[RMDB]
RNA sequence: GGGAACGACUCGAGUAGAGUCGAAAACGACCAAACCGAAACUCCCGUCGUGUCAACCGGUCUGGUCGGCCGGUCGACGGGAGCGCAAAUCCGGAUCGUCGGGUCCGACGGGCUGCCACUGCCCGCGGACGCCUGAGCGUUUCGACGCUCAGGCGUCAAAAGAAACAACAACAACAAC
Reactivity to 2A3 in 0.01 (KOAc 150mM, MgCl2 10mM, bicine 150mM(pH8.5), 24C), signal-to-noise 2, nucleotides 027 to 126: c010g020a030c070c000a170a130a040c060c010g080a140a060a050c010u000c000c020c000g010u010c000g020u050g170u180c060a050a030c000c010g020g000u020c040u070g210g050u080c040g010g000c020c010g000g070u040c000g000a020c000g000g000g000a010g000c020g040c000a130a140a050u070c050c020g010g010a080u050c030g040u030c020g090g020g000u000c010c010g030a100c020g020g000g000c020u130g130c040c060a130c120u070g000c000c000c040g000c000g070
Reactivity to DMS in 0.01 (KOAc 150mM, MgCl2 10mM, bicine 150mM(pH8.5), 24C), signal-to-noise 2, nucleotides 027 to 126: c000g000a030c010c050a070a150a130c060c050g000a080a120a130c010u000c000c000c010g010u000c000g030u020g010u010c250a180a190c000c020g010g010u000c040u020g020g010u040c170g010g000c010c000g000g000u000c020g000a020c020g000g020g030a000g010c060g000c130a070a070a140u000c170c010g020g000a110u000c100g040u000c030g010g030g010u000c030c000g000a110c000g020g010g000c000u000g000c130c080a070c180u010g000c000c000c000g020c070g010
The record gives the reactivity of an RNA of 177 nucleotides to 2A3 and DMS. For DMS the reverse transcriptase was MarathonRT. For DMS, 1,374 sequencing reads were counted. For 2A3, 1,736 sequencing reads were counted.